Source: RMDB libraries RFM100 and RFMREP, as collected in RNAgym. This 177-nucleotide RNA was probed chemically with 2A3 and DMS. 2A3 adducts were read by reverse transcription with SuperScript II with manganese. The reactions ran in a buffer of 150 mM KOAc, 10 mM MgCl2 and 150 mM bicine (pH 8.5), at 24 C. DMS adducts were read by reverse transcription with MarathonRT.

RNA sequence: GGGAACGACUCGAGUAGAGUCGAAAAUAUUUGGAGAGAAAAGGCAUGAUUGAGGUUGCGACUUUUUCGUUUUUGCUUUUGCAUGGAUAAUUCAUCCAUGCACAUCUCACUUUAUUGGACCUUCAAGCGAAGUUGGAAAUUUCGAUUUCCAACUUCGAAAAGAAACAACAACAACAAC
Reactivity to 2A3 in 0.01 (KOAc 150mM, MgCl2 10mM, bicine 150mM(pH8.5), 24C), signal-to-noise 6, nucleotides 027 to 126: u090a040u030u050u090g060g020a090g010a000g010a040a030a030a030g030g000c010a020u040g030a070u080u150g030a010g020g030u070u080g050c090g090a080c030u050u040u030u050u040c040g060u030u010u010u090u120g040c010u040u070u030u070g000c000a000u000g000g000a020u040a140a130u300u160c080a010u000c000c000a000u000g000c000a000c010a000u000c000u000c010a070c040u020u050u030a060u040u040g050g010a050c010c000u030u060c120a030a010g070
Reactivity to DMS in 0.01 (KOAc 150mM, MgCl2 10mM, bicine 150mM(pH8.5), 24C), signal-to-noise 4, nucleotides 027 to 126: u000a020u020u010u020g020g010a070g010a060g000a040a130a070a090g000g000c030a010u020g000a070u000u000g010a020g000g010u000u010g000c150g020a050c050u010u010u010u010u000c060g020u000u000u010u010u000g010c040u000u010u010u000g030c000a000u000g000g000a010u000a080a140u020u030c170a070u000c010c000a000u000g000c000a020c200a030u000c030u010c040a090c060u000u000u000a030u010u010g000g000a140c020c010u010u020c130a080a100g010